Source: RMDB library OK3TST, as collected in RNAgym.
Chemical mapping of a 207-nucleotide RNA with DMS and 2A3.
In probing experiments dimethyl sulfate is read out at A N1 and C N3, which are open when not base-paired.
Values cover nucleotides 27 to 156.
The reactions ran in a buffer of 150 mM KOAc, 10 mM MgCl2 and 150 mM bicine (pH 8.5), at 24 C.
For 2A3 the reverse transcriptase was SuperScript II with manganese.
For DMS, 2,900 sequencing reads were counted.
The 2A3 profile rests on 1,613 reads.
RNA sequence: GGGAACGACUCGAGUAGAGUCGAAAAGAAAGAGAGCUGUCUUUACACUGUAGGAUGCGCAGUAGUGUGCCUGGCCUUCGGCCCAUCAGAUUCCAGGAAUACAUCUCAGUUGUGACAGCCAAUCUCUAAACGUCGCUAAAUGCCCCUGGGGCUCAAACGGACGUAUAUGAUUCGUCAUAUACGUCCGAAAAGAAACAACAACAACAAC
Reactivity to DMS in 0.01 (KOAc 150mM, MgCl2 10mM, bicine 150mM(pH8.5), 24C), signal-to-noise 2, nucleotides 027 to 156: g020a050a070a050g000a050g040a100g020c010u000g030u000c020u010u000u070a100c070a060c010u010g000u010a150g020g020a020u010g030c060g010c110a170g020u000a160g000u000g050u000g010c000c010u010g060g040c160c090u000u010c090g030g020c000c040c050a160u000c020a170g010a120u010u000c010c020a070g000g000a120a110u000a060c030a020u000c000u000c010a070g020u000u000g000u010g020a020c040a020g030c020c040a050a070u000c020u000c020u000a000a100a080c060g020u010c060g000c040u000a030a080a100u000g000c050c040c010c120u000g040g020g000g010c010u010c070a010a100a180
Reactivity to 2A3 in 0.01 (KOAc 150mM, MgCl2 10mM, bicine 150mM(pH8.5), 24C), signal-to-noise 3, nucleotides 027 to 156: g060a010a140a020g040a010g000a010g020c010u010g020u010c010u060u250u140a050c050a020c030u030g060u150a060g050g110a040u040g040c070g000c090a040g030u230a080g090u050g010u030g120c010c000u010g020g020c010c030u080u100c070g090g030c030c020c010a090u160c030a040g060a100u090u030c000c000a000g060g000a030a060u100a100c000a030u000c040u010c040a040g000u200u120g040u120g050a010c000a000g010c000c000a000a090u000c000u010c010u060a100a120a070c050g020u060c010g030c060u040a120a070a140u140g030c020c020c020c060u080g030g030g010g050c000u070c200a130a100a010